An RNA of 170 nucleotides, treated with DMS and 2A3 and read out base by base. DMS (dimethyl sulfate) methylates the pairing face of unpaired adenines and cytosines. 2A3 adducts were read by reverse transcription with SuperScript II with manganese. For DMS, 32,403 sequencing reads were counted.
RNA sequence: GGGAACGACUCGAGUAGAGUCGAAAACACACCUCCAGGCGGCGGGCCGGCUACUCUUCUUUUCCUUUUCUCGUCUUCCUCGGUCAGCCUCCUGAGUUCCUCUUCUUCCUCCCUGCUGAGGUUCUUCGUCCGACCAUCUUCGGAUGGUCGAAAAGAAACAACAACAACAAC
Reactivity to DMS in 0.01 (KOAc 150mM, MgCl2 10mM, bicine 150mM(pH8.5), 24C), signal-to-noise 6, nucleotides 027 to 129: c140a070c140a010c020c040u010c090c000a000g010g040c040g050g000c040g020g020g040c060c040g060g000c110u020a070c080u040c060u050u020c050u000u010u000u040c020c040u040u010u010u040c060u010c030g030u020c050u020u020c030c020u050c000g040g030u040c060a070g030c000c070u040c040c000u020g020a120g030u040u030c000c010u030c060u040u020c030u040u040c000c000u020c000c050c050u000g030c050u040g020a040g040g020u020u010c050u050u020c050g000u000c060
Reactivity to 2A3 in 0.01 (KOAc 150mM, MgCl2 10mM, bicine 150mM(pH8.5), 24C), signal-to-noise 5, nucleotides 027 to 129: c070a010c000a060c000c010u040c030c010a010g040g000c000g000g000c000g000g010g000c000c010g030g000c040u110a080c030u050c020u110u060c020u040u070u060u090c020c000u080u060u070u040c080u030c020g080u010c020u050u020c020c020u020c000g000g000u000c010a020g010c000c000u000c000c000u010g000a010g010u040u030c000c010u030c020u060u010c000u080u030c010c010u030c000c010c000u010g010c020u030g010a040g050g000u020u020c010u020u030c010g080u010c030
Reactivities are given for positions 27 through 129. The data come from the RNA Mapping Database (RMDB), library 15KLIB.